Background: This 177-nucleotide RNA was probed chemically with DMS and 2A3. Conditions: 150 mM KOAc, 10 mM MgCl2 and 150 mM bicine (pH 8.5), 24 C. It was measured as part of the RMDB library RFM100. The DMS profile rests on 821 reads.
[RMDB]
RNA sequence: GGGAACGACUCGAGUAGAGUCGAAAAUGUAGUAACAUAGCUAUUCCCCUUUCGGCGAGACUUGGCGUGUUUCUGUCGUUCUUAGUAUAGCAUAUUUAUAAUGCGCUUACAUUUUCUUGCCAUGAAGUUCGAUCCGUGUUUUCGAACACGGAUCGAAAAAAGAAACAACAACAACAAC
Reactivity to DMS in 0.01 (KOAc 150mM, MgCl2 10mM, bicine 150mM(pH8.5), 24C), signal-to-noise 1, nucleotides 027 to 126: u000g000u000a010g020u010a070a260c060a060u000a050g010c080u010a030u000u000c000c000c000c230u010u000u000c280g000g060c010g000a000g170a070c300u000u070g010g000c140g150u000g000u000u000u000c130u060g070u000c030g010u000u000c000u000u000a010g080u000a050u000a000g050c060a300u060a000u000u020u070a130u010a090a000u000g010c000g060c020u000u020a110c070a030u000u010u010u000c000u000u010g000c060c000a090u150g000a060a000g000
Reactivity to 2A3 in 0.01 (KOAc 150mM, MgCl2 10mM, bicine 150mM(pH8.5), 24C), signal-to-noise 1, nucleotides 027 to 126: u100g000u050a060g080u020a130a090c110a040u080a260g020c010u010a040u080u080c030c000c000c020u000u070u050c010g000g000c000g010a000g000a010c010u010u050g000g060c010g050u010g000u050u110u070c050u050g000u010c000g010u070u000c000u000u120a100g000u110a080u030a150g010c010a100u010a040u070u140u060a170u120a120a080u080g000c010g030c010u050u000a000c000a040u150u000u000u000c000u000u010g000c010c000a010u120g010a050a000g000